[RMDB]
This 207-nucleotide RNA was probed chemically with DMS and 2A3. For 2A3 the reverse transcriptase was SuperScript II with manganese. The DMS profile rests on 3,411 reads. Source: RMDB library OK3TST, as collected in RNAgym. Conditions: 150 mM KOAc, 10 mM MgCl2 and 150 mM bicine (pH 8.5), 24 C.
RNA sequence: GGGAACGACUCGAGUAGAGUCGAAAAGUAUAUUUUUUCAGUUAAGUGUGAGAUAGGCCCUAAUGAUCACAUGUGUAUCAGAGAUACACUUGCCAAGCAAAGGAAGAGAAACACACGUUAGGAAAGGGACAAAGACCAUGAUCUCUUCUCAAGAAAACGUUAAAUGAGGGUUCGCCCUCAUUUAACGAAAAGAAACAACAACAACAAC
Reactivity to DMS in 0.01 (KOAc 150mM, MgCl2 10mM, bicine 150mM(pH8.5), 24C), signal-to-noise 2, nucleotides 027 to 156: g000u010a080u010a020u000u000u000u010u000u000c030a140g000u010u000a070a060g030u000g030u010g020a060g000a140u010a120g030g000c050c000c030u000a060a080u000g000a090u000c040a010c010a030u000g020u000g030u000a080u000c000a300g010a180g050a190u000a020c010a020c000u020u010g030c010c030a100a130g020c060a050a140a120g000g010a030a060g000a080g000a090a060a090c020a050c040a070c080g020u000u000a110g010g000a080a040a050g000g000g000a140c030a060a090a110g000a120c240c020a100u000g000a110u000c040u000c000u000u010c000u010c010a040a060g000a020a110a070a170
Reactivity to 2A3 in 0.01 (KOAc 150mM, MgCl2 10mM, bicine 150mM(pH8.5), 24C), signal-to-noise 3, nucleotides 027 to 156: g050u020a080u020a140u170u120u040u030u030u130c090a060g010u090u110a220a040g020u060g010u010g020a040g010a090u100a080g110g000c000c000c000u060a090a130u050g080a060u050c010a020c010a070u060g000u010g000u000a000u020c060a040g060a010g000a220u000a010c000a000c010u010u020g070c020c010a070a030g010c070a120a060a070g020g020a090a020g020a000g010a010a110a000c020a010c010a010c130g040u050u070a020g080g000a110a010a000g040g010g050a020c040a030a070a010g090a030c030c060a050u090g120a170u020c040u000c000u000u030c050u030c030a010a080g060a060a100a010a010